RNA sequence: GGGAACGACUCGAGUAGAGUCGAAAACUGCGGCAGGCGCUGGCCGGCAACGCGCAUGUAAAGGAGGUCCGCGGCCUCGGUCUCAUCACCGGCAUCCAGCUCGACGUGAUGGCAGGAGAUGUGGUGCUCGUGCAACAAGUUUCGACUUGUUGCACGAAAAAGAAACAACAACAACAAC
Reactivity to DMS in 0.01 (KOAc 150mM, MgCl2 10mM, bicine 150mM(pH8.5), 24C), signal-to-noise 2, nucleotides 027 to 126: c050u030g010c050g000g000c020a070g010g010c040g010c050u000g010g010c040c010g000g020c120a070a080c090g010c020g010c050a080u000g000u010a040a120a140g000g020a090g010g000u000c070c070g020c060g000g000c050c030u010c040g020g000u000c030u010c050a040u000c040a040c030c000g000g020c020a080u000c090c040a080g000c050u000c090g010a140c110g020u010g010a050u000g020g000c050a070g000g010a090g000a090u010g010u010g020g010u010g010c120
Reactivity to 2A3 in 0.01 (KOAc 150mM, MgCl2 10mM, bicine 150mM(pH8.5), 24C), signal-to-noise 1, nucleotides 027 to 126: c010u020g050c000g030g000c030a080g020g010c020g010c080u110g080g000c000c000g070g000c010a060a040c030g000c000g060c050a050u130g020u130a130a120a060g080g030a030g000g060u020c050c030g030c060g080g000c010c000u020c010g000g050u030c040u000c010a050u030c000a010c010c010g000g000c000a000u040c020c030a030g070c000u070c100g110a100c080g080u130g030a040u000g060g010c040a040g030g030a070g000a010u060g030u060g050g010u030g020c020
This 177-nucleotide RNA was probed chemically with DMS and 2A3.
It was measured as part of the RMDB library OK2TRN.